RNA sequence: GGGAACGACUCGAGUAGAGUCGAAAACACCGCGGUGACGCGGUGACGUUGACGUGAGUCAACGAGGCCACGCUUCGGCGUGGCCAAGGAGACGUCUUCGGACGUCUCCAACGCGCUCUACGGAGCGCGAACAUCCUACUACGGUAGGAUGAGGGGGCCAGAUGUCAUGUCUCUCAAGCCUAGGAGACACUAGACACUCUGGACUAUCGGUUAGAGGAAACCCCCCCAAAAAUGUAUAGGCUUACUGGACCACGUGAGUGGUCCAGAAGGACGGAUUCGUCCGUCCUAAAAGAAACAACAACAACAAC
Reactivity to 2A3 in 0.01 (KOAc 150mM, MgCl2 10mM, bicine 150mM(pH8.5), 24C), signal-to-noise 2, nucleotides 027 to 266: c020a000c000c020g000c010g000g010u100g010a050c010g040c000g000g000u010g020a020c000g000u000u020g000a010c000g070u120g110a040g000u000c000a000a000c000g000a150g010g030c000c010a000c000g030c010u040u110c220g120g010c000g000u000g000g000c000c000a000a010g000g000a020g000a000c000g000u010c000u030u040c280g110g000a000c000g000u010c010u000c010c000a000a000c000g010c000g010c000u000c000u040a060c250g080g000a020g000c000g010c000g000a000a010c000a010u000c000c000u000a010c000u020a060c240g080g000u010a000g000g000a000u000g000a110g030g000g010g000g040c030c000a000g000a010u000g000u000c010a020u010g000u030c000u000c000u010c040a060a020g000c000c000u020a000g020g000a000g000a000c000a000c020u080a100g000a000c000a000c060u010c020u020g010g020a010c010u090a140u110c030g040g030u060u120a090g050a140g300g100a060a030a070c040c020c010c010c000c010c070a080a070a090a020a000u210g050u190a140u030a030g020g000c040u010u010a060c000u000g000g000a010c000c010a020c000g130u180g190a190g040u000g060g000u000c000c000a000g000a040